[RMDB]
RNA sequence: GGGAACGACUCGAGUAGAGUCGAAAAGAUAUGGAUCUAAACAGGGAGCCUAUCGGAAACGAUGAGGCAUCGAUCUGUGGAUCCUAAGUCAAAUCCUGAACCCUAGCUUCGGCUAGGGUUCAGGAAAUCCAUAAGUUCAGUUCGCUGAACUUAUGGAAAAAGAAACAACAACAACAAC
Reactivity to DMS in 0.01 (KOAc 150mM, MgCl2 10mM, bicine 150mM(pH8.5), 24C), signal-to-noise 4, nucleotides 027 to 126: g000a040u000a300u010g000g010a010u000c000u000a060a110a120c010a010g000g020g010a020g010c010c000u000a080u010c000g010g000a100a130a130c000g010a010u000g010a010g000g010c000a120u000c130g010a070u010c000u000g020u000g010g000a010u000c000c010u010a030a080g010u010c030a070a110a190u000c000c000u000g010a020a000c000c000c010u000a010g000c010u000u010c270g020g030c010u000a000g020g010g000u000u000c000a000g010g000a010a010a040
Reactivity to 2A3 in 0.01 (KOAc 150mM, MgCl2 10mM, bicine 150mM(pH8.5), 24C), signal-to-noise 2, nucleotides 027 to 126: g010a020u050a070u130g000g000a000u020c020u080a300a050a170c010a000g000g050g000a010g000c000c000u000a000u020c010g000g040a080a040a010c020g000a000u120g300a040g030g030c080a130u250c020g060a080u060c010u010g010u010g030g000a000u000c000c000u010a120a000g060u020c020a050a000a250u010c010c020u020g010a010a000c000c000c020u010a000g000c010u070u050c300g050g040c000u010a000g030g000g000u010u000c010a000g000g000a000a000a000